[RMDB]
This 207-nucleotide RNA was probed chemically with DMS.
For DMS, 1,992 sequencing reads were counted.
RNA sequence: GGGAACGACUCGAGUAGAGUCGAAAAGGGGUCAUUGGGUAUCGAUUUGAAACUGUACGUUCCAUCGAUCUCAUUAAGACAGCACUGAAGCCUCCACGGUGCAAUGACGAUGAGGGAGGAACUGUUUCAAAUCGAUACCCAAUGACGGAGGCACCCAGUUUAAAGAGACCUUCGGGUCUCUUUAAACAAAAGAAACAACAACAACAAC
Reactivity to DMS in 0.01 (KOAc 150mM, MgCl2 10mM, bicine 150mM(pH8.5), 24C), signal-to-noise 1, nucleotides 027 to 156: g030g000g010g020u000c000a010u000u000g000g000g000u000a030u000c070g000a020u000u000u010g010a020a000a030c010u050g070u000a060c220g000u000u010c000c010a220u030c220g000a030u010c020u000c000a010u000u020a000a200g110a260c090a080g000c010a020c000u000g000a100a100g040c020c000u000c010c030a300c030g010g020u000g030c000a090a160u030g000a180c300g000a020u000g010a050g000g010g010a020g000g020a040a000c000u000g040u000u040u000c000a030a020a050u000c010g010a000u000a010c000c000c010a000a000u000g000a040c020g000g000a040g030g080c010a120c010c000c020a300